RNA sequence: GGGAACGACUCGAGUAGAGUCGAAAAAUGUACAGAGGACGUCGGGUUUCUUCGACCCAUACCAGAGCUGGAACCCAAAGCCGUCGCAGUACACAGCUGACUCAAAACUGGAGAGAGUGGGCGACGCGAGCGGCGCACAUUUCGAUGUGCGCCGCUCAAAAGAAACAACAACAACAAC
Reactivity to 2A3 in 0.01 (KOAc 150mM, MgCl2 10mM, bicine 150mM(pH8.5), 24C), signal-to-noise 2, nucleotides 027 to 126: a000u060g030u040a030c030a020g070a120g180g060a050c050g030u080c060g040g000g050u040u040u080c040u080u060c030g040a190c010c010c060a020u060a060c020c060a030g010a020g070c050u030g000g030a080a070c000c000c010a060a080a000g050c030c000g000u020c040g000c010a010g010u130a040c060a010c000a030g080c050u020g090a110c010u030c070a030a170a030a180c090u080g060g020a020g010a000g020a040g030u020g000g030g000c010g000a010c060g030c020
Reactivity to DMS in 0.01 (KOAc 150mM, MgCl2 10mM, bicine 150mM(pH8.5), 24C), signal-to-noise 2, nucleotides 027 to 126: a140u000g070u000a090c090a070g040a190g000g000a070c060g000u000c100g000g010g010u000u000u020c110u010u020c050g000a090c000c020c030a110u040a020c020c180a140g010a210g000c010u000g130g000a060a090c000c000c000a100a060a140g020c280c100g060u000c000g000c010a100g000u000a040c060a050c130a030g010c110u000g010a190c060u000c120a030a040a130a180c030u000g000g000a030g000a100g020a040g010u000g040g020g000c010g000a010c070g020c220